The record gives the reactivity of an RNA of 177 nucleotides to DMS and 2A3. DMS adducts were read by reverse transcription with MarathonRT. The DMS profile rests on 6,545 reads. The RNA was probed in 150 mM KOAc, 10 mM MgCl2 and 150 mM bicine (pH 8.5) at 24 C.
RNA sequence: GGGAACGACUCGAGUAGAGUCGAAAAAGUAAUCAAGGAUUUUCCGAUAUUAGAUCAAAAAGUCAAUGGCAAACGUUUAGCAUAUCUUGAUUCAACAGCGACAAGUCAAACGCCUAUGCAAGUGUUAAUAACUUCUUCUGUUCGCAGAAGAAGUUAUAAAAGAAACAACAACAACAAC
Reactivity to DMS in 0.01 (KOAc 150mM, MgCl2 10mM, bicine 150mM(pH8.5), 24C), signal-to-noise 4, nucleotides 027 to 126: a080g020u010a050a060u010c030a030a050g040g010a080u020u000u010u000c070c060g000a070u040a080u010u030a080g010a070u030c060a050a080a070a050a080g010u010c040a080a060u010g010g000c050a110a060a050c130g030u010u010u010a060g000c050a020u040a030u020c010u000u020g000a000u000u020c080a060a070c180a050g010c040g000a050c090a030a100g010u000c080a030a100a120c110g000c000c020u020a080u010g000c050a070a060g000u010g000u010u000a050
Reactivity to 2A3 in 0.01 (KOAc 150mM, MgCl2 10mM, bicine 150mM(pH8.5), 24C), signal-to-noise 4, nucleotides 027 to 126: a000g180u140a040a060u120c080a040a050g080g030a020u040u010u040u080c060c020g000a000u060a110u050u230a070g050a060u110c120a130a110a030a000a020g130u110c090a080a060u080g110g000c070a110a060a100c110g010u090u200u190a060g000c000a060u040a010u120c000u040u060g030a050u030u190c060a130a080c020a130g050c000g090a050c050a120a010g020u010c020a060a020a020c050g100c000c000u040a080u050g040c070a080a010g020u010g070u210u060a090